RNA sequence: GGGAACGACUCGAGUAGAGUCGAAAAGUUAGGUGAGGCUCCUAUGCAAACACAGGCCACUGCCCAAAAAUGUCCAAAGACGCCAAUGGGUCGAACAGGGAUUGUCGGAUUAAGGCUUUCCAUAAUGAAAACAAAGUAUGCUUCGGCAUACUUUGAAGACAUACAGAAACUUCGGUUUCUGUAUGUCAAAAGAAACAACAACAACAAC
Reactivity to DMS in 0.01 (KOAc 150mM, MgCl2 10mM, bicine 150mM(pH8.5), 24C), signal-to-noise 2, nucleotides 027 to 156: g020u000u000a050g050g000u010g000a070g040g030c000u010c000c030u000a110u020g000c050a060a160a110c060a110c040a110g020g010c010c020a050c040u010g030c010c090c000a030a060a050a050a080u000g000u010c030c050a080a090a160g010a080c120g040c060c020a080a170u000g040g020g000u000c170g000a020a150c090a150g010g000g020a020u000u000g020u000c020g000g000a150u000u000a070a110g020g030c060u000u000u000c000c020a130u020a110a090u010g010a150a070a100a160c000a020a000a040g020u020a010u000g010c000u000u010c300g050g030c000a020u000a000c010u000u000u000g020a020a110
Reactivity to 2A3 in 0.01 (KOAc 150mM, MgCl2 10mM, bicine 150mM(pH8.5), 24C), signal-to-noise 2, nucleotides 027 to 156: g050u060u070a030g010g030u040g060a090g060g020c040u020c060c010u050a060u130g030c050a030a120a080c060a030c040a090g020g010c030c000a020c040u080g020c000c000c000a010a030a030a020a010u040g010u000c010c010a210a030a030g030a040c040g000c000c010a040a040u050g010g000g020u010c010g030a100a040c080a100g000g030g050a010u040u030g040u040c030g020g000a100u140u180a120a020g060g000c010u020u030u020c010c000a040u090a180a150u140g090a080a050a000a000c000a010a000a010g000u000a000u010g010c000u030u100c150g080g000c000a000u000a000c000u000u000u000g000a000a000
Chemical mapping of a 207-nucleotide RNA with DMS and 2A3. Conditions: 150 mM KOAc, 10 mM MgCl2 and 150 mM bicine (pH 8.5), 24 C. The data come from the RNA Mapping Database (RMDB), library M2RFPK.